[RMDB]
Background:
The data come from the RNA Mapping Database (RMDB), library M2RFPK. An RNA of 207 nucleotides, treated with 2A3 and read out base by base. Values cover nucleotides 27 to 156. The reactions ran in a buffer of 150 mM KOAc, 10 mM MgCl2 and 150 mM bicine (pH 8.5), at 24 C.
RNA sequence: GGGAACGACUCGAGUAGAGUCGAAAAACUCCUAUUCCAACACGUCCUCGUCGUACAGAGUGGUAACAUGUGUCACCACAUAUCUAAGCUUGGGUACACGGGCUUGACCCAACCCCUUGGGCGGAUGAAAACCAGAUUACGUUCGCGUAAUCUGGAAUCUGAGGAUUCAGUUCGCUGAAUCCUCAGAAAAAGAAACAACAACAACAAC
Reactivity to 2A3 in 0.01 (KOAc 150mM, MgCl2 10mM, bicine 150mM(pH8.5), 24C), signal-to-noise 1, nucleotides 027 to 156: a000c040u070c040c000u120a170u130u090c050c010a030a030c070a020c080g010u020c000c010u030c000g120u020c010g070u120a090c110a070g070a040g070u000g010g010u020a060a090c020a100u240g290u130g070u180c020a000c030c010a000c010a050u120a050u090c040u040a040a040g110c060u030u050g050g000g000u020a020c030a040c050g000g000g020c000u030u180g150a290c030c000c000a000a020c020c000c000c000u030u070g040g000g000c000g020g060a030u150g080a050a110a010a000c000c000a000g010a000u000u000a000c000g000u050u030c200g000c000g080u000a000a000u000c000u000g000g000a000a020